RNA sequence: GGGAACGACUCGAGUAGAGUCGAAAAGCGCGUAAAUACGGCCGUUAUUCGUUCUUGCCCAACAAUAUGAGGUCGUAGCGUGUGGGGGCAGGGACACCGUCGUUUUGUUCAAGAACGGAUUGUGCGCCGAGGCAAAAACAUUCGUGUUUUUGCCUCGAAAAGAAACAACAACAACAAC
Reactivity to DMS in 0.01 (KOAc 150mM, MgCl2 10mM, bicine 150mM(pH8.5), 24C), signal-to-noise 2, nucleotides 027 to 126: g020c020g030c040g020u000a080a080a120u010a030c010g010g000c030c030g020u020u010a060u000u000c070g000u010u000c000u010u000g000c290c040c060a070a070c100a100a080u000a080u010g010a150g010g010u000c020g000u010a080g030c030g010u010g000u000g010g010g020g000g010c020a040g010g010g020a080c030a120c060c070g000u000c050g000u000u000u020u010g020u000u020c180a100a020g010a020a010c000g000g000a050u000u000g040u000g000c030g010c050
Reactivity to 2A3 in 0.01 (KOAc 150mM, MgCl2 10mM, bicine 150mM(pH8.5), 24C), signal-to-noise 2, nucleotides 027 to 126: g000c040g000c020g060u080a000a080a080u130a070c010g000g010c000c030g090u120u110a110u120u110c060g000u010u010c000u010u000g000c000c040c020a050a040c050a030a020u130a090u240g150a080g040g010u010c020g050u030a030g000c030g000u040g050u080g070g090g020g000g060c000a020g040g020g030a020c000a020c010c010g070u080c010g000u050u010u060u090g040u020u080c030a060a000g000a020a020c000g020g040a040u060u050g020u040g080c080g030c080